Structure probing data (DMS) for a 177-nucleotide construct. The data come from the RNA Mapping Database (RMDB), library TTRINS. For DMS the reverse transcriptase was MarathonRT.
[RMDB]
RNA sequence: GGGAACGACUCGAGUAGAGUCGAAAAGAUAUGGAUCAGGAAGGGGCACAGAGGGAAUUCGAGGAUCGCACGGACUCGGAAACGAGUUUGCGGGAGAAUCUCUGUGCCCCUUCCUGAUCCUAAGUCACCUUUGUGAAAAGUUCGCUUUUCACAAAGGAAAAGAAACAACAACAACAAC
Reactivity to DMS in 0.01 (KOAc 150mM, MgCl2 10mM, bicine 150mM(pH8.5), 24C), signal-to-noise 2, nucleotides 027 to 126: g010a060u000a300u010g000g000a000u000c000a010g010g000a030a030g040g010g000g020c010a000c000a010g000a020g030g000g000a160a130u000u000c000g010a090g040g020a040u000c010g020c080a110c300g010g000a010c010u000c000g000g000a020a060a190c000g020a040g020u000u000u000g000c020g000g010g010a010g010a030a030u010c010u000c020u010g000u000g020c000c010c000c000u000u000c000c000u010g000a000u000c000c000u000a000a070g000u000c020a180